This 177-nucleotide RNA was probed chemically with 2A3 and DMS.

RNA sequence: GGGAACGACUCGAGUAGAGUCGAAAAGAUUCGAGGAGCUGUGGGUUCUGGUAAAUCCACUGGAUUACCACACCACUUGAGCACUUACGGUAGAGUUUUGCUGAUAGAACCGACACGGCCAUUAGCAUCAUAACCCGCGAUUCGUCGCGGGUUAUGAAAAAGAAACAACAACAACAAC
Reactivity to 2A3 in 0.01 (KOAc 150mM, MgCl2 10mM, bicine 150mM(pH8.5), 24C), signal-to-noise 3, nucleotides 027 to 126: g080a090u130u120c050g020a090g020g010a080g010c090u000g050u010g020g010g020u110u000c040u060g000g010u010a100a060a140u070c050c060a080c190u100g020g000a010u020u050a100c030c020a000c060a050c040c000a060c000u090u070g070a050g020c000a010c020u090u160a040c100g200g000u080a020g000a050g160u030u000u070u220g000c010u030g010a050u010a100g040a000a040c030c020g040a100c050a010c090g000g030c000c000a030u120u080a010g030c020a020
Reactivity to DMS in 0.01 (KOAc 150mM, MgCl2 10mM, bicine 150mM(pH8.5), 24C), signal-to-noise 2, nucleotides 027 to 126: g030a120u050u000c040g000a100g010g000a160g010c060u010g000u000g000g010g020u000u020c110u020g010g010u000a010a020a040u000c080c050a120c130u000g000g000a000u010u000a080c000c000a070c190a010c060c060a110c070u010u040g010a030g020c070a030c050u010u010a060c060g010g000u000a040g010a160g010u000u020u000u000g010c020u000g010a100u070a080g000a060a090c010c000g010a190c140a030c050g020g000c070c020a100u000u020a040g000c090a140

As a SHAPE reagent, 2A3 marks flexible, mostly unpaired nucleotides at the ribose 2'-OH. For 2A3 the reverse transcriptase was SuperScript II with manganese. The RNA was probed in 150 mM KOAc, 10 mM MgCl2 and 150 mM bicine (pH 8.5) at 24 C. Values cover nucleotides 27 to 126. Source: RMDB library OK1LIB, as collected in RNAgym.